[RMDB]
RNA sequence: GGGAACGACUCGAGUAGAGUCGAAAAGAAAGAAAGAAAGCGGUUGGGUGGGUCCAUCGACCGUCGUGGCGUAUUCGGACGCUUUACCACGACGCGAGGAAAUAGCGAGACCGACCACGCCCUUUAACAGAGGUAUAGUAGUUCGCUACUAUACCAAGUUCGAAAGGAUGUUCGCAUCCUUUCGAACAAAAGAAACAACAACAACAAC
Reactivity to 2A3 in 0.01 (KOAc 150mM, MgCl2 10mM, bicine 150mM(pH8.5), 24C), signal-to-noise 1, nucleotides 027 to 156: g070a020a110a000g030a050a300a010g030a000a080a000g190c280g060g070u090u150g160g020g000u000g120g000g000u000c050c080a150u040c030g040a060c050c000g010u000c000g010u000g000g020c040g020u100a110u110u210c030g050g050a040c020g000c140u100u060u150a040c020c020a000c000g010a000c020g000c010g000a020g000g070a050a120a010u120a030g080c020g020a050g000a070c000c000g020a000c000c040a020c010g000c000c000c010u010u040u000a120a080c110a020g020a010g130g030u000a000u000a000g000u000a000g000u010u030c100g000c050u000a000c000u000a000u040a000c000c000a000a000